[RMDB]
RNA sequence: GGGAACGACUCGAGUAGAGUCGAAAAGAAAUUACGUUUCCUUUACACUUCUCAAACCGGGAUCAAGAGAAGCGAAGCAUCCCUCAUAUCCACGAUGGAGGGUGUCGUGGAGUAUACUGUACCAAAAAGAGCGAACACGGCUUCGGCCGUGUUCGAAGACAUGGAUUUUCUUCGGAAAAUCCAUGUCAAAAGAAACAACAACAACAAC
Reactivity to 2A3 in 0.01 (KOAc 150mM, MgCl2 10mM, bicine 150mM(pH8.5), 24C), signal-to-noise 3, nucleotides 027 to 156: g030a010a090a020u120u080a030c050g010u010u000u050c010c040u000u020u100a050c090a050c010u060u060c040u040c070a170a190a160c070c040g070g020g010a050u060c070a150a040g030a020g010a000a020g010c080g030a040a000g020c050a050u030c000c040c000u040c020a100u090a060u150c010c010a000c020g000a020u050g150g060a020g050g040g030u080g000u010c000g000u000g010g010a000g010u020a020u030a060c090u070g060u110a070c010c090a030a060a020a030a080g090a030g050c010g000a000a000c000a000c010g000g010c000u030u020c130g080g000c000c010g010u000g000u000u000c000g000a000a000

Structure probing data (2A3) for a 207-nucleotide construct. It was measured as part of the RMDB library M2RFPK. The reactions ran in a buffer of 150 mM KOAc, 10 mM MgCl2 and 150 mM bicine (pH 8.5), at 24 C. 2A3 is a SHAPE reagent: it acylates the 2'-hydroxyl of flexible nucleotides of all four kinds.